This 207-nucleotide RNA was probed chemically with 2A3 and DMS. In probing experiments dimethyl sulfate is read out at A N1 and C N3, which are open when not base-paired. The RNA was probed in 150 mM KOAc, 10 mM MgCl2 and 150 mM bicine (pH 8.5) at 24 C. For 2A3 the reverse transcriptase was SuperScript II with manganese. DMS adducts were read by reverse transcription with MarathonRT. It was measured as part of the RMDB library M2RFPK. 2A3 is a SHAPE reagent: it acylates the 2'-hydroxyl of flexible nucleotides of all four kinds. The 2A3 profile rests on 4,743 reads.
RNA sequence: GGGAACGACUCGAGUAGAGUCGAAAACACAGGAUCGUGUAGAAGUCCUGCUCGGGGCGGAAGCAUUAAAACCAUUCGAGCUAGUCAAUGCGUGGCGUGUCUCUCCGCAGCGUGUUGGCGAAUGUAACAAGCUGCCUCUCGUUCGCGAGAGGCAGAACUAUAAUAAGAGGUUCGCCUCUUAUUAUAGAAAAGAAACAACAACAACAAC
Reactivity to 2A3 in 0.01 (KOAc 150mM, MgCl2 10mM, bicine 150mM(pH8.5), 24C), signal-to-noise 5, nucleotides 027 to 156: c030a000c010a010g230g070a230u200c100g030u030g020u090a020g050a200a020g040u020c000c010u010g000c000u010c000g000g000g010g000c040g030g060a060a010g050c070a040u140u230a060a050a050a070c050c020a030u100u100c050g030a030g030c040u040a030g050u020c000a010a010u010g010c000g010u040g050g010c010g030u080g070u050c050u020c030u020c200c010g010c000a000g020c000g010u010g000u000u000g000g020c020g010a040a020u090g030u100a050a090c070a090a020g040c000u000g000c020c000u000c010u000c000g020u050u030c200g010c010g110a000g000a000g000g000c000a000g000a000a000
Reactivity to DMS in 0.01 (KOAc 150mM, MgCl2 10mM, bicine 150mM(pH8.5), 24C), signal-to-noise 2, nucleotides 027 to 156: c040a070c030a120g030g010a040u000c090g010u010g040u010a120g010a200a100g000u000c000c020u000g010c050u000c050g000g000g020g000c020g000g010a090a140g020c070a070u000u000a050a070a120a140c040c030a130u000u010c050g010a130g020c020u010a150g000u010c010a030a010u000g000c010g010u000g010g070c020g000u000g050u010c110u000c070u020c280c010g020c000a020g000c010g050u030g020u010u010g010g010c030g030a070a090u000g010u000a090a160c100a050a140g010c000u000g030c020c000u000c010u020c000g030u000u000c240g060c060g010a040g010a020g030g000c000a000g010a010a050